This 207-nucleotide RNA was probed chemically with 2A3 and DMS.
RNA sequence: GGGAACGACUCGAGUAGAGUCGAAAAAGUUCUAGUCCUCACCUAAGAUCAGACUGACACGGCCCUCAAAGUAAGAGCACUUGGUUGGGCUUUGUGGUGGGGAUCAGUGUCUCAUUUUUAGUCCCAAAUUAAAAACGAGAUUUUGGGCUGUACAUCACCAUGAUCCAUCAUUCGUGAUGGAUCAUGGAAAAGAAACAACAACAACAAC
Reactivity to 2A3 in 0.01 (KOAc 150mM, MgCl2 10mM, bicine 150mM(pH8.5), 24C), signal-to-noise 1, nucleotides 027 to 156: a010g040u070u000c020u010a010g040u000c000c000u000c000a000c050c000u090a150a000g000a160u050c060a040g150a280c160u070g010a000c030a000c030g000g000c000c030c060u060c090a120a030a000g020u080a140a050g090a090g230c010a010c060u030u000g010g070u080u060g000g000g000c000u000u060u090g040u040g000g000u010g000g010g000g020a010u020c030a010g050u010g040u060c000u000c070a070u020u020u060u120u200a000g050u090c010c010c020a010a010a010u060u060a030a020a000a000a030c080g030a050g010a170u020u100u100u000g030g000g000c010u030g040u060a050c070a110u070c070a010
Reactivity to DMS in 0.01 (KOAc 150mM, MgCl2 10mM, bicine 150mM(pH8.5), 24C), signal-to-noise 1, nucleotides 027 to 156: a040g010u010u000c000u010a020g020u000c000c000u010c030a060c040c000u000a060a080g000a130u000c040a100g050a140c080u040g000a060c090a090c120g020g080c000c010c000u010c040a050a040a070g020u000a030a110g010a110g060c060a070c020u020u010g030g060u000u010g020g060g010c020u010u000u000g030u020g010g010u000g030g010g020g010a000u000c020a020g030u000g030u000c000u010c010a050u000u000u000u000u000a070g000u000c010c080c080a060a020a140u000u000a010a040a000a000a030c010g020a040g000a210u000u000u000u020g000g000g030c070u000g000u010a070c120a130u000c070a230
Annotation:
The data come from the RNA Mapping Database (RMDB), library OK3TST. The 2A3 profile rests on 605 reads. For 2A3 the reverse transcriptase was SuperScript II with manganese. Reactivities are given for positions 27 through 156.